[RMDB]
RNA sequence: GGGAACGACUCGAGUAGAGUCGAAAAAAGCAGGAGGACACUGUCACAGAAACAUAGGGAGACAUUGGCCAUGAGGAAAGCGAGGAAGAAGGAUAAGCGCAUUGUGCGGCCUUGCUAUGAAGAGCGAACCGGUGUAUCUUUUCGAAGAUACACCGGUAAAAGAAACAACAACAACAAC
Reactivity to 2A3 in 0.01 (KOAc 150mM, MgCl2 10mM, bicine 150mM(pH8.5), 24C), signal-to-noise 1, nucleotides 027 to 126: a000a000g050c040a020g020g070a130g040g020a020c000a010c020u050g050u040c000a060c010a100g100a060a090a010c050a050u180a080g050g070g020a060g020a020c040a060u040u060g020g000c030c020a040u120g040a010g000g120a110a020a040g020c050g000a020g030g020a010a100g040a030a010g080g010a030u030a110a070g070c020g000c070a090u100u230g040u030g060c010g000g010c020c020u030u040g000c020u060a080u180g100a070a030g030a030g090c050g000a000
Reactivity to DMS in 0.01 (KOAc 150mM, MgCl2 10mM, bicine 150mM(pH8.5), 24C), signal-to-noise 2, nucleotides 027 to 126: a060a040g000c050a040g000g010a040g010g010a050c090a060c060u000g000u000c040a040c090a080g010a110a090a080c140a070u000a120g010g010g000a100g030a070c070a070u000u020g010g000c020c020a070u010g040a060g020g000a060a030a060g010c090g000a060g000g000a040a040g000a060a050g000g000a120u000a050a120g020c070g000c040a120u010u000g010u000g030c020g000g020c030c050u000u000g000c030u010a070u000g010a040a020g000a070g020c090g020a100